An RNA of 207 nucleotides, treated with DMS and 2A3 and read out base by base. High 2A3 reactivity points to a flexible backbone, as in loops and unpaired stretches. For 2A3 the reverse transcriptase was SuperScript II with manganese.

RNA sequence: GGGAACGACUCGAGUAGAGUCGAAAAGUUGAGCUUUCGAGCUCAACAAAAAUCCUAAGUCAGGUCCACUUGGAUUUAGAAGCAGAGUCGGAAACGACGACGAAGCUUCUUGUCAGUGGUCCUGAUAUGGAAAAAAAACCCGUCUUCGGACGGGUAAUGGUAGUACAUGAUUCGUCAUGUACUACCAAAAAGAAACAACAACAACAAC
Reactivity to DMS in 0.01 (KOAc 150mM, MgCl2 10mM, bicine 150mM(pH8.5), 24C), signal-to-noise 2, nucleotides 027 to 156: g000u000u010g000a000g000c000u000u000u030c300g000a060g000c020u000c000a010a030c000a000a090a050a060a100u000c010c000u010a130a230g000u000c020a000g000g000u020c010c020a090c040u000u010g030g010a030u000u000u020a020g010a050a020g000c020a050g010a300g040u000c030g000g000a260a140a090c070g060a200c000g000a040c020g010a300a220g030c000u000u000c010u000u010g030u000c020a060g000u000g010g020u000c000c000u010g010a000u000a120u010g000g050a000a030a000a150a000a030a210a150c000c000c010g080u000c030u000u000c300g030g000a050c000g030g030g010u000a000a010
Reactivity to 2A3 in 0.01 (KOAc 150mM, MgCl2 10mM, bicine 150mM(pH8.5), 24C), signal-to-noise 3, nucleotides 027 to 156: g000u010u000g010a010g000c020u080u060u200c250g020a010g000c000u010c000a000a000c000a000a000a000a000a010u020c020c010u030a150a010g000u010c000a000g020g000u000c000c000a020c010u190u300g120g000a040u300u250u170a000g000a000a000g020c010a000g010a010g110u000c000g000g100a290a190a120c170g270a060c020g000a010c010g000a100a010g010c040u000u000c000u000u010g000u000c000a000g000u000g000g000u000c000c010u010g000a000u000a000u000g000g060a000a000a010a000a000a300a000a000c000c030c030g020u000c000u030u050c170g140g000a000c000g000g000g000u050a000a000